[RMDB]
The data come from the RNA Mapping Database (RMDB), library M2PK50. Chemical mapping of a 177-nucleotide RNA with 2A3 and DMS. For 2A3, 2,222 sequencing reads were counted. The DMS profile rests on 2,294 reads. Conditions: 150 mM KOAc, 10 mM MgCl2 and 150 mM bicine (pH 8.5), 24 C.
RNA sequence: GGGAACGACUCGAGUAGAGUCGAAAAGCAUCACUGUUCGCAGUGAUGCAAAGGUACAAAAACUUGCAAAAGGACAAAAGUCCAAAGUACCAAAGCAUGAAAAAAUCCCUACCUUCGGGUAGGGAAAGUUGAAUAUUUGGUUCGCCAAAUAUUCAACAAAAGAAACAACAACAACAAC
Reactivity to 2A3 in 0.01 (KOAc 150mM, MgCl2 10mM, bicine 150mM(pH8.5), 24C), signal-to-noise 2, nucleotides 027 to 126: g020c000a000u000c000a000c000u010g040u070u090c150g020c110a010g020u000g010a000u000g020c000a000a000a000g000g000u010a000c010a030a170a040a120a050c140u080u100g060c050a030a060a100a150g010g000a030c030a040a300a060a010g000u000c010c020a000a080a000g000u020a010c020c010a040a040a010g140c090a200u300g100a080a040a030a000a010a060u020c000c000c000u000a000c020c020u030u060c300g080g020g000u020a010g000g000g020a040a000a000
Reactivity to DMS in 0.01 (KOAc 150mM, MgCl2 10mM, bicine 150mM(pH8.5), 24C), signal-to-noise 3, nucleotides 027 to 126: g000c000a000u000c000a020c010u000g000u000u030c210g030c010a010g010u000g010a020u000g000c000a010a040a060g020g030u000a010c010a130a100a110a110a060c090u010u000g020c140a060a080a070a090g010g010a040c070a030a090a110a100g010u010c000c000a020a060a130g000u000a000c010c000a110a130a150g000c100a050u000g000a000a010a070a090a080a120u000c000c000c000u000a000c000c010u000u010c220g020g010g010u000a000g000g000g000a010a000a050